[RMDB]
RNA sequence: GGGAACGACUCGAGUAGAGUCGAAAAUUCUGUUUUCGUCUCAAGCUCUUCAUUACUACAGCGCAAGUCUACCAUUACCACACCCACACACAGAUAUUACGGCUAAUGUUUAUUAGUCAAGUUUCCAACAAACCUCUGAAUUCGUUCAGAGGUUUGUAAAAGAAACAACAACAACAAC
Reactivity to DMS in 0.01 (KOAc 150mM, MgCl2 10mM, bicine 150mM(pH8.5), 24C), signal-to-noise 2, nucleotides 027 to 126: u030u020c150u050g010u010u000u000u000c020g000u000c020u000c040a090a170g010c000u000c020u100u000c080a050u000u000a050c050u000a080c020a090g000c010g000c060a070a070g000u010c040u020a050c000c030a060u050u000a130c060c000a060c060a070c040c010c020a020c100a060c040a040c150a070g020a090u000a050u020u010a060c140g000g010c040u000a000a000u000g020u030u030u080a020u000u020a030g000u000c030a080a120g020u000u000u000c000c030a150
Reactivity to 2A3 in 0.01 (KOAc 150mM, MgCl2 10mM, bicine 150mM(pH8.5), 24C), signal-to-noise 4, nucleotides 027 to 126: u070u040c030u140g050u020u000u010u040c020g000u000c010u000c010a040a100g010c020u000c000u110u020c030a130u030u140a050c040u050a060c020a060g020c000g010c070a060a050g000u000c010u060a100c010c030a040u050u070a030c010c010a030c010a020c050c030c000a020c000a000c000a000c010a030g090a080u080a040u130u200a040c040g010g000c000u010a000a010u030g050u120u120u110a070u020u000a010g010u000c000a020a010g020u010u020u000c030c000a010